[RMDB]
RNA sequence: GGGAACGACUCGAGUAGAGUCGAAAACUGGUCGAUGUGAUAUGUAUGGGUUACUUGGUGUCAGCGGAUAACAUGUUUUAUUCGCCAUUAAGCAAUACACCAGUGACCAGACAUAUCCCUAUCGCUUGACCGGAUUUGUGUUCGCACAAAUCCGGUCAAAAGAAACAACAACAACAAC
Reactivity to 2A3 in 0.01 (KOAc 150mM, MgCl2 10mM, bicine 150mM(pH8.5), 24C), signal-to-noise 2, nucleotides 027 to 126: c030u060g030g040u180c000g000a030u020g000u020g000a020u000a000u000g050u030a000u090g170g030g000u080u010a000c020u020u180g030g000u010g020u040c010a030g030c000g010g000a000u000a000a040c060a170u090g100u080u050u000u000a000u000u020c000g000c010c010a100u130u100a090a020g000c010a000a080u100a180c000a000c000c000a010g000u000g020a000c020c020a000g000a000c020a010u030a000u000c030c000c000u070a000u000c000g040c090u000u030

An RNA of 177 nucleotides, treated with 2A3 and read out base by base. Reactivities are given for positions 27 through 126. The RNA was probed in 150 mM KOAc, 10 mM MgCl2 and 150 mM bicine (pH 8.5) at 24 C.